[RMDB]
RNA sequence: GGGAACGACUCGAGUAGAGUCGAAAACUGCAUCUGUGGAGGACGAAGCAUAUUUCUGUUUCUGGAGGAUUAUUUAUAAUCUGCGGGAAAGUCUUGCAGGUGGCUGGGAUAUGUUCAGUCUGGUAGAAAAAUCAGGAGUCCUUCGGGACUCCUGAAACAUUACUACUAGGUUCGCCUAGUAGUAAUGAAAAGAAACAACAACAACAAC
Reactivity to 2A3 in 0.01 (KOAc 150mM, MgCl2 10mM, bicine 150mM(pH8.5), 24C), signal-to-noise 1, nucleotides 027 to 156: c020u080g010c030a090u000c060u050g020u030g040g090a130g060g000a000c020g020a010a010g000c020a010u020a010u080u110u010c100u110g120u040u040u010c010u020g060g040a040g040g000a020u000u010a040u020u300u020a050u030a060a020u020c020u030g020c080g020g020g000a020a130a070g020u040c020u030u040g020c010a000g030g050u030g020g060c040u070g000g020g020a040u040a000u010g040u010u050c020a020g000u010c010u020g000g040u090a070g220a120a090a050a010a010u040c000a000g000g010a010g000u000c010c010u100u120c130g010g000g010a000c010u000c010c000u000g000a000a000a000
Reactivity to DMS in 0.01 (KOAc 150mM, MgCl2 10mM, bicine 150mM(pH8.5), 24C), signal-to-noise 1, nucleotides 027 to 156: c040u000g010c050a050u000c050u000g000u010g000g020a180g040g010a060c030g000a070a110g020c020a080u010a080u000u010u000c000u010g020u000u000u000c000u000g000g060a300g010g000a050u000u000a060u010u020u010a070u010a110a020u010c020u000g020c030g080g010g030a080a100a110g000u000c010u010u000g030c020a060g050g010u000g010g010c010u000g020g000g000a080u000a020u010g030u010u000c010a270g000u000c010u000g000g000u000a110g000a070a090a080a110a160u010c000a010g010g010a040g020u000c000c020u000u010c300g040g030g010a000c010u000c000c000u000g000a010a020a100
The record gives the reactivity of an RNA of 207 nucleotides to 2A3 and DMS. Source: RMDB library M2RFPK, as collected in RNAgym. High DMS reactivity at an A or C suggests that its Watson-Crick edge is free. For DMS the reverse transcriptase was MarathonRT.